An RNA of 207 nucleotides, treated with 2A3 and DMS and read out base by base. DMS (dimethyl sulfate) methylates the pairing face of unpaired adenines and cytosines. DMS adducts were read by reverse transcription with MarathonRT. Values cover nucleotides 27 to 156. The DMS profile rests on 3,582 reads. 2A3 adducts were read by reverse transcription with SuperScript II with manganese. Source: RMDB library M2RFPK, as collected in RNAgym. For 2A3, 1,072 sequencing reads were counted.
[RMDB]
RNA sequence: GGGAACGACUCGAGUAGAGUCGAAAAGGAACCGGAUGUCAUCACGUUGUUGCAGUACCGGAUGGCAUCUUAAAUCCGAUCUGCAAAUAAGCAUGUAGAAAGCUGAUGUGGGCUUUAGCUGGACGGGGGAAUACAGGCAACUUCGGUUGCCUGUAAACACACCUAUGUUCUUCGGAACAUAGGUGUGAAAAGAAACAACAACAACAAC
Reactivity to 2A3 in 0.01 (KOAc 150mM, MgCl2 10mM, bicine 150mM(pH8.5), 24C), signal-to-noise 2, nucleotides 027 to 156: g010g000a120a000c050c050g010g000a000u000g010u030c010a000u000c010a030c270g090u170u130g070u060u140g080c020a040g040u120a070c000c060g030g000a000u000g000g000c010a010u040c010u000u010a010a010a000u040c020c010g000a110u010c000u020g000c030a000a070a040u120a110a110g050c030a020u060g030u050a060g100a130a070a030g010c050u070g010a120u130g050u130g030g080g000c030u040u050u080a060g030c010u080g020g030a070c040g020g000g000g000g080a000a000u060a000c010a000g000g000c010a000a010c010u070u020c170g000g000u000u000g000c010c000u010g000u000a000a010a000
Reactivity to DMS in 0.01 (KOAc 150mM, MgCl2 10mM, bicine 150mM(pH8.5), 24C), signal-to-noise 2, nucleotides 027 to 156: g010g030a080a140c030c150g000g000a030u000g010u000c000a050u000c020a160c210g000u000u000g000u000u010g020c010a080g000u000a060c060c020g000g020a030u000g000g000c040a040u010c060u000u000a040a090a110u000c020c030g000a110u010c060u010g030c050a020a030a110u000a070a100g000c050a130u000g000u010a080g010a060a060a090g010c010u000g000a080u000g040u000g040g020g030c020u000u010u000a030g010c060u000g000g010a110c000g020g010g040g050g020a090a200u020a020c000a010g000g010c000a010a020c010u000u000c250g090g040u010u000g000c000c000u010g010u000a000a080a150